RNA sequence: GGGAACGACUCGAGUAGAGUCGAAAAGGAAGAAAGACCGCCUGCGACCGAGCGUUUUCACCAUCCGGAAAACAGCAAGUUCUUUCCUCACAUACAAAAGGGAUAGUGAGUAUGAAGUAUGUAGUCCUCACUAUUCACCUUUCGAGGUGAAUAGUGAAAAAGAAACAACAACAACAAC
Reactivity to DMS in 0.01 (KOAc 150mM, MgCl2 10mM, bicine 150mM(pH8.5), 24C), signal-to-noise 4, nucleotides 027 to 126: g010g010a060a090g000a050a050a060g000a080c040c090g010c060c020u000g020c070g000a100c070c020g000a110g000c090g000u000u000u000u000c050a090c100c060a090u010c070c060g000g000a020a020a040a070c070a080g020c080a090a110g010u000u000c020u000u010u000c030c010u010c050a080c050a050u000a050c090a030a070a100a070g020g010g000a040u000a040g010u000g000a060g010u000a050u010g010a070a140g010u000a060u010g000u000a110g010u010c030c040
Reactivity to 2A3 in 0.01 (KOAc 150mM, MgCl2 10mM, bicine 150mM(pH8.5), 24C), signal-to-noise 2, nucleotides 027 to 126: g040g010a050a040g040a040a120a010g030a030c010c020g040c060c020u010g010c010g010a010c040c000g010a020g040c060g040u030u020u010u100c060a030c040c030a080u080c040c030g020g000a000a110a020a030c000a020g030c040a140a010g030u050u020c000u020u040u010c000c010u010c010a020c000a000u170a020c050a020a170a050a040g000g090g000a020u070a070g050u040g050a010g030u050a060u100g020a080a010g070u090a060u150g060u040a020g060u040c010c010